[RMDB]
RNA sequence: GGGAACGACUCGAGUAGAGUCGAAAAUAUAGAAAUCUUGUCUAAUAUCACGGGAAGCGUUGCAGAGAUUGGCAGAAAGAACAGCCGAAACUAUCGGACAUCUGGAAGUUCAUCAGGCGGAGGAAGUGGAAGCACCAACGAAAGCGGAGACAUUUCAGAAUGUAGCAAGAUUCGUCUUGCUACAUUCAAAAGAAACAACAACAACAAC
Reactivity to 2A3 in 0.01 (KOAc 150mM, MgCl2 10mM, bicine 150mM(pH8.5), 24C), signal-to-noise 2, nucleotides 027 to 156: u210a010u050a060g030a020a100a000u040c020u080u130g040u030c020u070a130a050u150a170u160c060a010c100g020g010g010a050a000g030c050g110u140u130g020c060a020g030a010g000a090u050u020g020g000c040a000g040a040a080a000g040a070a070c040a020g000c010c000g040a020a040a050c090u140a120u140c020g000g010a010c020a070u060c030u010g030g060a050a040g000u040u000c000a020u010c010a010g030g030c020g010g010a010g000g010a060a020g030u020g060g000a030a020g000c010a000c050c030a040a050c040g040a080a040a000g030c030g020g000a020g000a040c070a030u060u090u060c010a030
Reactivity to DMS in 0.01 (KOAc 150mM, MgCl2 10mM, bicine 150mM(pH8.5), 24C), signal-to-noise 2, nucleotides 027 to 156: u010a180u010a140g010a040a110a070u000c060u000u000g020u000c000u010a120a130u010a090u010c040a110c070g020g000g010a090a090g010c070g020u000u020g040c020a100g020a140g000a090u010u010g030g010c060a100g010a080a110a030g010a070a100c070a110g000c000c020g030a080a040a050c140u010a080u010c030g020g000a100c090a070u000c030u010g030g010a050a070g000u000u000c020a080u010c020a050g010g020c060g010g000a070g020g010a010a070g020u000g030g010a060a060g000c030a140c030c030a000a080c030g000a070a030a090g030c080g040g010a120g020a070c090a120u000u000u020c020a200
This 207-nucleotide RNA was probed chemically with 2A3 and DMS. For DMS, 2,540 sequencing reads were counted. Conditions: 150 mM KOAc, 10 mM MgCl2 and 150 mM bicine (pH 8.5), 24 C. It was measured as part of the RMDB library OK3TST.